[RMDB]
RNA sequence: GGGAACGACUCGAGUAGAGUCGAAAAUGAAGAUGGAAUCCGUAGUAAUCGCAUUUCAAAACAGUGCGGUGAAUACGUCCCUGCUCCUUGCACACACCGCCCGUCAAACCACCCGAGCGGGGCGUGACAUAUGCCUUUCCUUCGGGAAAGGCAUAUGAAAAGAAACAACAACAACAAC
Reactivity to DMS in 0.01 (KOAc 150mM, MgCl2 10mM, bicine 150mM(pH8.5), 24C), signal-to-noise 2, nucleotides 027 to 126: u000g020a050a100g010a080u000g020g070a080a120u000c180c010g040u000a060g030u000a220a010u000c010g000c120a000u020u020u000c010a080a040a100a110c300a010g000u000g000c000g000g000u000g000a120a240u000a030c010g010u000c020c010c020u000g030c070u000c020c140u000u000g000c040a050c100a040c030a030c030c000g010c000c020c010g020u010c100a070a140a150c100c090a090c080c020c020g000a010g000c040g030g010g000g040c060g000u000g010a210

This 177-nucleotide RNA was probed chemically with DMS.
Values cover nucleotides 27 to 126.
The DMS profile rests on 836 reads.
The data come from the RNA Mapping Database (RMDB), library RFMREP.
For DMS the reverse transcriptase was MarathonRT.
The reactions ran in a buffer of 150 mM KOAc, 10 mM MgCl2 and 150 mM bicine (pH 8.5), at 24 C.